This 177-nucleotide RNA was probed chemically with DMS and 2A3. In probing experiments dimethyl sulfate is read out at A N1 and C N3, which are open when not base-paired. The data come from the RNA Mapping Database (RMDB), library TTRDES.
[RMDB]
RNA sequence: GGGAACGACUCGAGUAGAGUCGAAAAGAUAUGGAGCUCAUGAAUAGCAACAGCCUGUCUCGGAAACGAGACAGGACAUGCUAGUCAUAGCUCCUAAGUCAAAACGUAUUAUGUUCGCAUAAUACGACAUUAACAUAGCGUUCGCGCUAUGUUAAUGAAAAGAAACAACAACAACAAC
Reactivity to DMS in 0.01 (KOAc 150mM, MgCl2 10mM, bicine 150mM(pH8.5), 24C), signal-to-noise 8, nucleotides 027 to 126: g000a050u000a300u000g000g010a020g000c010u000c300a000u010g000a030a020u000a010g010c000a030a100c300a200g000c010c000u000g000u000c000u000c000g000g000a110a080a230c000g010a010g010a010c000a000g000g000a010c080a090u000g000c000u000a010g000u000c000a010u000a020g010c010u000c000c000u000a010a070g010u000c030a120a070a100a210c020g010u000a010u000u000a000u000g010u000u010c250g020c010a010u010a010a010u000a000c000g010a190
Reactivity to 2A3 in 0.01 (KOAc 150mM, MgCl2 10mM, bicine 150mM(pH8.5), 24C), signal-to-noise 7, nucleotides 027 to 126: g050a020u090a070u190g000g000a010g010c020u100c250a060u020g000a030a030u030a010g000c010a000a140c080a180g070c000c000u000g000u010c000u000c000g040g030a090a090a070c010g000a000g000a000c000a000g000g000a000c000a020u030g000c000u000a000g020u010c010a000u010a010g000c000u000c000c000u000a030a020g030u000c020a000a030a110a130c020g000u000a010u010u000a010u020g080u070u110c300g000c120a000u010a010a000u010a010c010g020a060
For 2A3, 37,505 sequencing reads were counted.